This 177-nucleotide RNA was probed chemically with 2A3 and DMS. For 2A3 the reverse transcriptase was SuperScript II with manganese. DMS (dimethyl sulfate) methylates the pairing face of unpaired adenines and cytosines.

RNA sequence: GGGAACGACUCGAGUAGAGUCGAAAAGAUAUGGACCCUACCAGCUUUUGACGACGGGUCGGAAACGACGAUUCGUCGAUAAGCUGAUGGGUCCUAAGUCAAACAUUCUUAGUUCGCUAAGAAUGAAUCCAAGAUAAAUCUUCGGAUUUAUCUUGGAAAAAGAAACAACAACAACAAC
Reactivity to 2A3 in 0.01 (KOAc 150mM, MgCl2 10mM, bicine 150mM(pH8.5), 24C), signal-to-noise 4, nucleotides 027 to 126: g020a020u030a020u130g000g010a000c000c020c000u030a120c040c000a010g050c010u130u100u210u230g200a110c020g000a000c010g020g070g030u050c130g050g030a300a300a040c170g220a030c010g030a100u020u020c000g010u000c000g010a030u030a070a000g000c000u000g000a010u020g000g000g000u000c000c000u000a020a000g000u010c000a060a030a050c000a010u000u000c000u020u010a040g020u060u070c290g020c170u000a000a000g000a010a000u000g010a010a090
Reactivity to DMS in 0.01 (KOAc 150mM, MgCl2 10mM, bicine 150mM(pH8.5), 24C), signal-to-noise 5, nucleotides 027 to 126: g010a020u000a300u000g000g000a020c000c000c000u010a160c120c000a020g000c000u000u000u000u000g000a120c040g000a020c140g020g010g010u000c000g020g000a090a090a140c130g020a070c000g000a210u000u000c000g010u000c000g010a050u010a020a010g000c000u000g000a040u000g000g000g010u000c000c000u000a000a040g000u000c030a160a110a260c010a010u000u000c000u000u000a010g000u000u020c250g020c000u000a010a010g010a010a000u000g010a080a120